[RMDB]
RNA sequence: GGGAACGACUCGAGUAGAGUCGAAAAGAACGCCAAGAGGCGAGACCGAGACCGAUAAUCACGCUAUCUCGGAAAAGUGGAAUAGCGUCAGGAGUCCACUUUCGGAAAAGCCGAAAGAACGGCAGAAACUAUCACGUCCUUUCGAGGACGUGAUAGUAAAAGAAACAACAACAACAAC
Reactivity to DMS in 0.01 (KOAc 150mM, MgCl2 10mM, bicine 150mM(pH8.5), 24C), signal-to-noise 3, nucleotides 027 to 126: g000a040a100c060g000c020c010a150a200g000a120g020g000c010g000a100g030a290c030c000g000a100g000a290c180c080g000a100u000a130a110u040c140a110c080g000c020u000a070u000c040u010c030g030g000a050a080a070a090g020u020g000g000a100a040u020a010g010c060g010u000c200a070g070g030a190g010u000c000c050a100c000u000u000u030c030g000g010a170a070a090a080g000c040c030g010a020a030a030g000a080a080c090g000g000c010a100g010a060a050
Reactivity to 2A3 in 0.01 (KOAc 150mM, MgCl2 10mM, bicine 150mM(pH8.5), 24C), signal-to-noise 4, nucleotides 027 to 126: g040a030a010c030g010c020c000a170a060g060a170g100g000c040g020a000g020a010c000c010g000a020g060a060c040c060g010a070u140a140a110u220c070a060c070g000c010u010a000u010c010u030c080g090g110a140a080a000a040g180u150g040g000a120a090u040a080g050c020g010u020c040a070g030g150a010g080u030c000c000a000c000u030u020u000c020g030g000a030a110a060a130g200c000c000g020a000a030a000g030a170a070c060g010g000c000a000g150a060a120
This 177-nucleotide RNA was probed chemically with DMS and 2A3. It was measured as part of the RMDB library OK1LIB. The RNA was probed in 150 mM KOAc, 10 mM MgCl2 and 150 mM bicine (pH 8.5) at 24 C. 2A3 is a SHAPE reagent: it acylates the 2'-hydroxyl of flexible nucleotides of all four kinds.